Source: RMDB library OK2TST, as collected in RNAgym. This 177-nucleotide RNA was probed chemically with DMS and 2A3. For 2A3 the reverse transcriptase was SuperScript II with manganese. High DMS reactivity at an A or C suggests that its Watson-Crick edge is free. The reactions ran in a buffer of 150 mM KOAc, 10 mM MgCl2 and 150 mM bicine (pH 8.5), at 24 C.
RNA sequence: GGGAACGACUCGAGUAGAGUCGAAAAACGUAGCUGGGAUCGCGUUUAUACCCGCCUGAUGGCGCAACGCGGCAACUUGGAAAUCGACCUAAAGCCUUGGUAUCGUCUCCCUGAAAGCGACAGCAAAAGUUCAUUAGUCUUUCGAGACUAAUGAACUAAAAGAAACAACAACAACAAC
Reactivity to DMS in 0.01 (KOAc 150mM, MgCl2 10mM, bicine 150mM(pH8.5), 24C), signal-to-noise 4, nucleotides 027 to 126: a120c020g020u010a060g020c050u000g010g000g020a110u010c020g000c010g000u010u000u000a140u010a140c180c210c020g020c020c020u000g010a140u010g040g000c010g010c180a050a010c040g020c020g010g000c070a040a030c030u000u000g020g010a040a080a130u000c070g000a080c030c020u010a060a100a150g000c100c010u000u010g000g000u010a120u000c010g000u010c110u000c000c010c010u000g000a060a040a110g010c030g000a070c170a060g030c080a060a090a090
Reactivity to 2A3 in 0.01 (KOAc 150mM, MgCl2 10mM, bicine 150mM(pH8.5), 24C), signal-to-noise 4, nucleotides 027 to 126: a010c020g040u020a020g020c070u040g070g030g060a150u070c020g000c000g020u000u040u040a190u060a050c030c020c010g000c000c020u270g180a230u300g040g000c030g000c040a030a010c020g000c000g030g010c020a040a090c030u020u020g020g030a040a130a090u040c030g020a060c010c010u070a120a070a040g060c020c000u020u040g040g010u060a060u090c030g010u010c020u000c070c010c000u010g030a060a040a010g010c040g060a070c070a000g040c020a060a070a040